[RMDB]
RNA sequence: GGGAACGACUCGAGUAGAGUCGAAAAUGAACGCUGUCGAAGGAAAGCUUGACCAGCUAAUCUUCUGCAACGCCAUUACGAGGACUGCCCUUAGAGGCUCAUGGCGAUAGGUCACCCCGCCGGUCGGUUAAGAAUCAGCGAUUCGUCGCUGAUUCAAGAUAAAUAGGGGAUUCGUCCCCUAUUUAUCAAAAGAAACAACAACAACAAC
Reactivity to 2A3 in 0.01 (KOAc 150mM, MgCl2 10mM, bicine 150mM(pH8.5), 24C), signal-to-noise 2, nucleotides 027 to 156: u110g010a070a000c030g000c070u050g030u080c060g020a010a010g000g030a300a040a010g000c010u030u060g010a020c020c000a010g030c010u010a060a070u040c020u030u010c020u040g030c040a060a040c010g010c020c000a040u090u110a080c130g050a070g030g120a050c050u100g010c000c010c000u060u100a140g060a150g140g000c020u020c030a040u060g040g010c030g040a110u110a080g030g000u030c020a050c000c010c000c000g040c030c030g010g010u060c020g020g010u140u120a160a040g000a000a000u000c000a000g020c010g000a000u010u070c190g050u010c000g070c000u010g010a000u010u000c000a000a000
Reactivity to DMS in 0.01 (KOAc 150mM, MgCl2 10mM, bicine 150mM(pH8.5), 24C), signal-to-noise 2, nucleotides 027 to 156: u000g010a110a040c010g030c030u000g020u000c300g030a090a060g020g010a110a290a050g000c030u000u010g000a180c200c190a180g020c000u000a040a190u010c020u020u000c000u070g030c040a070a060c010g000c010c010a070u010u020a140c090g000a150g000g030a090c060u000g010c030c000c020u000u000a120g010a270g020g020c020u000c060a040u000g000g000c010g020a110u000a020g010g010u010c040a150c000c000c030c000g020c030c030g060g040u010c030g010g010u000u020a050a200g030a020a030u000c010a010g030c000g030a080u000u000c280g000u000c010g010c040u010g000a010u000u000c000a030a120